[RMDB]
RNA sequence: GGGAACGACUCGAGUAGAGUCGAAAAACCCUGUCCGGGGGUGAACCGCGAAACAGUACCGGACUCACCGUGUGGGAUCCUGUCUUUCGGAGUUCAAACGGUUAAACAAUAGAAAGACUAAGCAUGUAGCGCCUUGGAUGUAGGUUUUCUGGACGCGCACCUAGAUAAUCUUCGGAUUAUCUAGGUGAAAAGAAACAACAACAACAAC
Reactivity to 2A3 in 0.01 (KOAc 150mM, MgCl2 10mM, bicine 150mM(pH8.5), 24C), signal-to-noise 3, nucleotides 027 to 156: a010c010c000c000u000g010u010c000c000g000g040g000g010g000u010g020a050a050c020c010g040c080g110a130a100a070c080a060g050u040a040c000c000g000g000a010c000u020c030a010c000c020g000u030g000u020g040g010g010a010u000c000c000u010g000u020c000u000u000u000c000g010g000a030g000u020u020c020a070a020a020c010g020g010u030u150a070a090a020c040a030a030u030a010g020a010a010a000g020a000c010u080a050a050g050c060a050u100g060u100a000g030c010g010c030c000u050u070g020g020a030u070g060u140a080g060g000u070u020u020u040c020u010g040g000a020c020g000c010g000
Reactivity to DMS in 0.01 (KOAc 150mM, MgCl2 10mM, bicine 150mM(pH8.5), 24C), signal-to-noise 2, nucleotides 027 to 156: a070c000c000c040u000g010u000c020c020g000g000g030g030g050u000g000a080a130c010c020g010c040g000a220a110a170c080a140g030u000a100c050c020g010g000a070c040u010c080a070c000c040g040u000g020u000g040g010g000a070u000c000c010u000g010u010c040u000u000u020c060g020g010a210g000u000u000c010a030a050a100c000g000g000u000u000a090a070a140c090a090a090u000a160g000a110a020a030g010a050c010u010a080a130g040c070a060u010g020u000a120g000c020g020c000c010u000u000g050g010a090u000g020u000a110g000g000u000u000u000u000c010u000g020g020a080c020g030c070g030